The data come from the RNA Mapping Database (RMDB), library OK3TST. The record gives the reactivity of an RNA of 207 nucleotides to 2A3 and DMS. The RNA was probed in 150 mM KOAc, 10 mM MgCl2 and 150 mM bicine (pH 8.5) at 24 C. The 2A3 profile rests on 1,760 reads.
[RMDB]
RNA sequence: GGGAACGACUCGAGUAGAGUCGAAAAUGAAAUACCGAUAACAGCAAUGCCGUUUUCUUCCGCCUGCAUGCGCUCAAAAAUCAAGUCUUGGUAGGCCUUGAUUGUCUUCUUACCACGACCCUUAACUUCCAUUGUGAUUUGGCCAAGUGGCACAUGCAAAUGAGGUGAAGUUCGCUUCACCUCAUUUAAAAGAAACAACAACAACAAC
Reactivity to 2A3 in 0.01 (KOAc 150mM, MgCl2 10mM, bicine 150mM(pH8.5), 24C), signal-to-noise 3, nucleotides 027 to 156: u150g000a000a030a050u110a110c050c040g060a090u110a170a040c020a020g100c030a050a110u100g020c020c020g040u030u050u060u020c040u090u000c040c030g020c030c010u030g030c010a030u020g010c060g040c040u050c080a110a160a060a020a020u050c020a050a000g060u000c010u050u100g000g030u130a030g020g000c020c030u030u070g060a090u050u060g080u040c030u070u010c000u070u060a020c010c020a040c050g050a060c010c000c020u060u120a050a050c020u100u040c050c040a110u100u060g090u100g110a080u070u050u070g050g000c030c010a080a050g050u100g060g000c010a040c010a060u060g010c020
Reactivity to DMS in 0.01 (KOAc 150mM, MgCl2 10mM, bicine 150mM(pH8.5), 24C), signal-to-noise 2, nucleotides 027 to 156: u000g020a100a090a150u000a260c030c010g010a150u000a050a090c070a040g040c030a090a090u000g030c030c030g010u000u010u000u000c030u000u010c050c010g030c080c030u000g000c030a030u000g030c000g060c000u020c040a050a100a060a060a060u000c030a020a090g010u000c020u000u000g100g020u010a170g030g020c080c000u000u000g020a070u000u000g000u000c040u010u000c050u000u010a100c020c010a060c030g010a050c040c010c020u000u000a060a080c080u010u010c020c050a230u020u020g020u000g000a150u010u000u000g030g000c040c070a090a120g030u000g000g030c000a010c000a010u000g000c080